This 177-nucleotide RNA was probed chemically with 2A3 and DMS. Conditions: 150 mM KOAc, 10 mM MgCl2 and 150 mM bicine (pH 8.5), 24 C. DMS adducts were read by reverse transcription with MarathonRT. Source: RMDB library OK2TRN, as collected in RNAgym.
[RMDB]
RNA sequence: GGGAACGACUCGAGUAGAGUCGAAAACACCGAGACCUAAAUCAGUGUCUCCGAAUCCUCAUCCUGAUGUUCCAGCGGUUACUGUAGGAGCUUUGUCAGCUCCUGCUGACAAAAGUGAAACGGAAGAGUCAUGAUUAGGGUUCGCCCUAAUCAUGACAAAAGAAACAACAACAACAAC
Reactivity to 2A3 in 0.01 (KOAc 150mM, MgCl2 10mM, bicine 150mM(pH8.5), 24C), signal-to-noise 3, nucleotides 027 to 126: c040a010c010c010g000a010g040a030c010c070u110a130a180a220u210c030a050g030u050g030u250c010u030c020c000g060a030a060u020c020c010u030c030a050u050c000c020u050g040a070u070g090u080u060c020c010a020g020c070g060g060u090u100a070c040u060g010u050a010g000g050a000g000c000u060u060u090g120u090c020a010g000c010u060c000c020u020g000c000u000g010a020c020a000a110a010a010g140u140g080a060a060a040c040g040g030a040a010g070a040
Reactivity to DMS in 0.01 (KOAc 150mM, MgCl2 10mM, bicine 150mM(pH8.5), 24C), signal-to-noise 4, nucleotides 027 to 126: c100a120c110c090g010a060g010a100c060c050u000a050a090a130u010c130a040g010u000g000u000c020u000c010c080g000a100a070u000c020c010u000c060a070u000c020c030u000g010a120u000g000u000u000c010c010a100g030c080g020g000u000u000a080c090u000g020u020a030g000g000a120g000c020u000u000u010g000u010c220a020g010c000u000c080c120u000g010c000u000g000a040c080a030a070a070a080g010u010g000a110a090a080c060g000g000a120a080g000a130